[RMDB]
RNA sequence: GGGAACGACUCGAGUAGAGUCGAAAAGGAAAUUAUCGCAGUCACACAUGAACCAGAGACUAAGGAGGAAGUUGAAUGGAAGCCUGUUAGGGAUGAAGUCUGCGAAGCACCCUCCAAGAUUGAAAUCCGGAUGUAUUCCUUUCGAGGAAUACAUCCGAAAAGAAACAACAACAACAAC
Reactivity to 2A3 in 0.01 (KOAc 150mM, MgCl2 10mM, bicine 150mM(pH8.5), 24C), signal-to-noise 2, nucleotides 027 to 126: g050g030a060a060a100u190u100a140u060c000g070c000a000g020u100c090a170c030a000c000a200u070g090a110a100c010c000a000g020a000g020a000c040u040a140a180g000g000a020g050g020a100a000g000u080u100g010a170a050u030g040g020a080a020g070c000c040u200g080u300u240a160g050g000g000a000u020g000a060a040g030u020c040u070g010c020g000a040a000g030c030a050c010c000c000u000c050c010a040a030g110a170u140u230g050a110a230a000u210c010
Reactivity to DMS in 0.01 (KOAc 150mM, MgCl2 10mM, bicine 150mM(pH8.5), 24C), signal-to-noise 2, nucleotides 027 to 126: g030g000a070a060a120u040u000a090u000c070g030c010a050g040u000c020a080c180a130c080a150u000g030a220a150c020c000a090g000a300g000a020c020u010a070a100g050g020a020g010g020a100a050g000u000u000g000a050a130u000g050g010a120a050g000c020c000u000g010u010u000a110g000g020g010a130u000g000a290a160g000u000c020u010g020c000g020a050a150g000c110a040c070c010c000u000c020c000a110a040g000a090u010u000g000a070a090a080u010c070